The data come from the RNA Mapping Database (RMDB), libraries RFM100 and RFMREP. Structure probing data (DMS and 2A3) for a 177-nucleotide construct. For 2A3 the reverse transcriptase was SuperScript II with manganese.
RNA sequence: GGGAACGACUCGAGUAGAGUCGAAAAUUAUUUCACAACUCAUUGGGCAAUAGCCCAGCAUUCCCUGUCGAAAUGCAGAUUAAAUAUGUCAUUAUCACAGGCCAAUGGGAGGUGUUUCACGAAAACCUUUCUAUGAAAAAUUCGUUUUUCAUAGAAAAAAAGAAACAACAACAACAAC
Reactivity to DMS in 0.01 (KOAc 150mM, MgCl2 10mM, bicine 150mM(pH8.5), 24C), signal-to-noise 3, nucleotides 027 to 126: u020u050a070u030u020u010c050a050c040a080a130c020u000c010a040u000u010g000g000g020c020a070a040u000a170g010c020c010c030a040g000c030a110u020u030c090c000c000u000g030u000c200g000a030a020a010u000g000c020a010g010a100u040u030a060a160a140u040a060u010g010u020c000a020u010u010a100u000c020a010c010a000g000g000c010c020a010a010u000g020g000g010a030g000g010u010g020u010u020u010c060a070c130g020a080a060a100a090c110c090
Reactivity to 2A3 in 0.01 (KOAc 150mM, MgCl2 10mM, bicine 150mM(pH8.5), 24C), signal-to-noise 6, nucleotides 027 to 126: u060u030a110u040u180u120c090a070c040a090a090c010u020c020a020u020u040g010g000g000c020a060a160u030a170g010c020c000c010a000g010c000a030u110u170c010c000c000u000g020u020c100g000a010a010a000u010g000c010a010g050a130u160u240a130a120a100u260a090u080g120u130c010a000u010u050a110u190c000a010c000a010g020g000c010c000a000a000u020g010g020g010a050g020g030u010g040u010u040u070c100a090c100g150a090a010a050a050c000c000